[RMDB]
RNA sequence: GGGAACGACUCGAGUAGAGUCGAAAAUCAUUCUGGUGGGGUUUGGCAAUACUUGCCAACAGGAUAAAUGAUAAUUAUAUAAUGUCUGAUCUCAUGGUACAUGGCCUUCUGAGUGCCGAUACUCAAACUUCAUGGUCAUAUUCGUAUGACCAUGAAGAAAAGAAACAACAACAACAAC
Reactivity to 2A3 in 0.01 (KOAc 150mM, MgCl2 10mM, bicine 150mM(pH8.5), 24C), signal-to-noise 2, nucleotides 027 to 126: u000c000a010u050u100c040u100g100g010u040g030g090g000g020u000u050u080g000g000c000a000a060u040a290c120u070u080g000c000c000a020a010c010a010g070g000a020u080a180a190a030u070g020a030u040a210a090u300u120a080u050a090u070a300a110u070g000u020c030u000g030a030u020c000u020c020a040u080g060g000u070a070c030a120u090g030g070c040c000u120u090c040u080g050a010g080u050g000c030c050g030a050u060a060c020u070c070a020a070a130
Reactivity to DMS in 0.01 (KOAc 150mM, MgCl2 10mM, bicine 150mM(pH8.5), 24C), signal-to-noise 2, nucleotides 027 to 126: u000c050a060u010u000c000u010g050g050u010g010g020g000g020u020u000u020g000g000c020a030a130u010a090c250u010u000g000c000c000a020a090c080a080g020g000a080u000a090a100a050u000g010a100u020a080a110u020u000a140u010a150u010a070a100u000g000u000c020u010g000a100u010c040u000c040a060u010g010g010u010a020c110a090u000g010g010c000c020u000u000c080u010g010a080g030u000g000c080c050g040a080u000a050c040u000c040a060a050a130

An RNA of 177 nucleotides, treated with 2A3 and DMS and read out base by base. The reactions ran in a buffer of 150 mM KOAc, 10 mM MgCl2 and 150 mM bicine (pH 8.5), at 24 C. The 2A3 profile rests on 1,420 reads.